An RNA of 207 nucleotides, treated with DMS and 2A3 and read out base by base. It was measured as part of the RMDB library OK3TST. The 2A3 profile rests on 1,704 reads. DMS adducts were read by reverse transcription with MarathonRT.
[RMDB]
RNA sequence: GGGAACGACUCGAGUAGAGUCGAAAAUGAGAAGUGUGGUCCCAAGUCACAUCCCAACUAGCAGGUGAUGUCAUGCUGAGUCGCCCAACUGUUGGAUCAGGGUUUCCAACAUCCUGUCUGUCUACAGAUGGGGUUCAUUCCACAGUCUCAUUGUGGGCCAGUCAGUACUGUUCGCAGUACUGACUGGAAAAGAAACAACAACAACAAC
Reactivity to DMS in 0.01 (KOAc 150mM, MgCl2 10mM, bicine 150mM(pH8.5), 24C), signal-to-noise 2, nucleotides 027 to 156: u000g010a000g030a070a050g030u000g000u000g010g010u010c020c040c070a120a100g030u030c050a070c010a070u030c030c010c030a180a160c050u020a150g020c110a050g000g040u010g010a060u000g000u010c040a130u010g000c070u010g020a100g050u000c030g010c030c010c010a070a200c080u000g020u000u010g030g000a070u010c080a160g010g030g000u000u010u000c030c040a060a080c100a020u000c000c010u000g010u000c020u000g000u000c170u010a110c080a020g030a060u010g000g030g040g010u000u010c060a200u000u010c000c010a030c020a070g050u000c050u000c060a060u000u000g010u000g010g030g030
Reactivity to 2A3 in 0.01 (KOAc 150mM, MgCl2 10mM, bicine 150mM(pH8.5), 24C), signal-to-noise 2, nucleotides 027 to 156: u080g020a030g020a030a040g210u020g000u030g060g020u120c010c000c000a040a010g070u060c030a010c000a040u020c000c000c030a050a100c090u120a040g140c100a050g000g100u100g090a060u050g030u060c010a040u130g080c110u050g020a020g050u030c040g080c020c010c000a060a070c050u050g020u060u040g010g010a060u050c050a090g060g020g030u010u070u060c060c030a000a040c040a080u040c000c000u030g010u050c030u050g040u060c070u120a160c030a020g030a010u030g040g000g000g000u040u090c030a090u130u000c010c000a010c000a030g090u000c010u010c060a060u050u070g040u100g030g050g000